Annotation: Chemical mapping of a 170-nucleotide RNA with 2A3 and DMS. The 2A3 profile rests on 8,941 reads. Values cover nucleotides 27 to 129.
RNA sequence: GGGAACGACUCGAGUAGAGUCGAAAAUUGAAGGUAAAACAGCCUGUGGGUGAAACACACCCACAGGGCCCCUUGGGCGCUAGCACUCUGGUAUCACGGUACCUUGGUGCGCCUGUUUUACCGAAGGGACCGGUGUGCUUCGGCACACCGAAAAGAAACAACAACAACAAC
Reactivity to 2A3 in 0.01 (KOAc 150mM, MgCl2 10mM, bicine 150mM(pH8.5), 24C), signal-to-noise 2, nucleotides 027 to 129: u100u120g050a090a000g010g000u010a000a000a000a010c000a000g000c000c000u000g000u010g000g000g000u020g030a080a120a000c190a010c000a000c040c000c000a010c000a000g000g000g000c000c000c000c000u200u280g000g000g000c010g050c050u070a080g020c020a000c000u020c030u010g010g000u010a000u010c030a050c240g130g000u010a010c000c000u000u030g000g010u010g000c000g000c000c000u000g000u000u000u000u000a010c010c010g010a000a000g040g030g000a020c030
Reactivity to DMS in 0.01 (KOAc 150mM, MgCl2 10mM, bicine 150mM(pH8.5), 24C), signal-to-noise 2, nucleotides 027 to 129: u050u020g030a190a130g030g000u020a040a020a020a120c040a000g010c020c070u000g000u010g000g030g080u020g010a080a100a080c210a090c000a040c000c000c000a020c020a100g000g000g000c040c010c020c140u080u110g040g030g000c000g000c000u000a140g050c010a020c020u000c080u000g020g020u030a020u030c060a110c230g040g050u070a010c010c000u000u030g000g000u020g090c040g020c050c010u000g000u000u000u000u000a020c020c000g060a060a050g040g030g030a160c070